[RMDB]
This 177-nucleotide RNA was probed chemically with DMS and 2A3. Reactivities are given for positions 27 through 126. The DMS profile rests on 1,013 reads. For 2A3, 1,203 sequencing reads were counted. Conditions: 150 mM KOAc, 10 mM MgCl2 and 150 mM bicine (pH 8.5), 24 C.

RNA sequence: GGGAACGACUCGAGUAGAGUCGAAAACGGAGGGCGUGACCAGUGUGAUCAGUCAGUCGCAUAGCACCACAUCCGACAGCCAGAUCACCGUACGCUCUAGUCCCAUUGUGCUGGACAAGCUGGCCGACGCGCCAGGCAUAUUCGUAUGCCUGGCGCGAAAAGAAACAACAACAACAAC
Reactivity to DMS in 0.01 (KOAc 150mM, MgCl2 10mM, bicine 150mM(pH8.5), 24C), signal-to-noise 2, nucleotides 027 to 126: c170g000g000a120g000g000g000c030g010u000g000a120c190c170a100g040u010g020u000g060a020u000c010a080g020u010c050a140g030u030c010g050c250a030u030a070g000c070a080c150c110a050c140a030u040c270c010g000a030c030a040g000c060c010a130g000a000u000c090a030c000c010g000u000a010c010g000c020u000c010u000a060g010u000c000c000c000a130u010u020g010u000g020c010u000g000g000a190c120a090a200g050c030u000g000g020c010c040g000a160
Reactivity to 2A3 in 0.01 (KOAc 150mM, MgCl2 10mM, bicine 150mM(pH8.5), 24C), signal-to-noise 1, nucleotides 027 to 126: c070g260g020a000g050g030g000c000g000u040g070a110c030c110a070g030u060g000u000g180a000u010c000a010g070u010c000a080g020u030c030g000c040a020u040a060g090c040a070c200c010a040c020a060u010c050c000g020a000c020a000g020c020c000a060g000a000u030c070a010c000c000g000u020a000c010g000c000u050c020u010a000g090u030c010c000c000a000u040u180g000u070g000c020u020g000g010a040c090a120a110g060c030u040g020g040c020c010g060a020